[RMDB]
RNA sequence: GGGAACGACUCGAGUAGAGUCGAAAAGAUAUGGACAAGUUGGGAGGCAUUCGGAAACGAAUGGCCGAAGAACAACAUUGUCCUAAGUCAAAACUAUCUAACAUCGCUUCGGCGAUGUUAGAUAGAACUACUAGAUGCUCUUCGGAGCAUCUAGUAGAAAAGAAACAACAACAACAAC
Reactivity to 2A3 in 0.01 (KOAc 150mM, MgCl2 10mM, bicine 150mM(pH8.5), 24C), signal-to-noise 2, nucleotides 027 to 126: g010a000u070a010u150g010g010a010c010a000a000g000u010u010g020g020g030a040g000g000c010a000u010u000c010g010g050a080a080a060c000g040a010a000u090g190g110c030c060g020a050a000g020a000a000c010a010a000c060a300u000u020g000u010c000c000u020a120a030g070u030c040a000a000a120a190c010u000a010u020c000u000a000a000c000a000u000c000g000c010u050u120c270g070g010c000g000a000u010g000u000u000a000g000a000u000a000g000a000a010
Reactivity to DMS in 0.01 (KOAc 150mM, MgCl2 10mM, bicine 150mM(pH8.5), 24C), signal-to-noise 3, nucleotides 027 to 126: g000a030u010a300u010g010g000a020c020a010a020g020u000u000g040g000g000a130g000g020c010a030u000u000c000g000g000a080a110a150c000g010a010a020u000g030g020c010c000g000a060a070g000a130a140c000a010a020c030a100u010u000g010u000c000c000u010a010a080g000u000c040a060a070a130a130c010u000a010u000c000u010a000a000c000a000u000c000g010c000u000u010c220g030g020c000g010a000u000g000u000u000a020g000a000u000a010g030a060a140

Overview
This 177-nucleotide RNA was probed chemically with 2A3 and DMS. In probing experiments dimethyl sulfate is read out at A N1 and C N3, which are open when not base-paired. 2A3 adducts were read by reverse transcription with SuperScript II with manganese. Conditions: 150 mM KOAc, 10 mM MgCl2 and 150 mM bicine (pH 8.5), 24 C. For DMS, 2,443 sequencing reads were counted.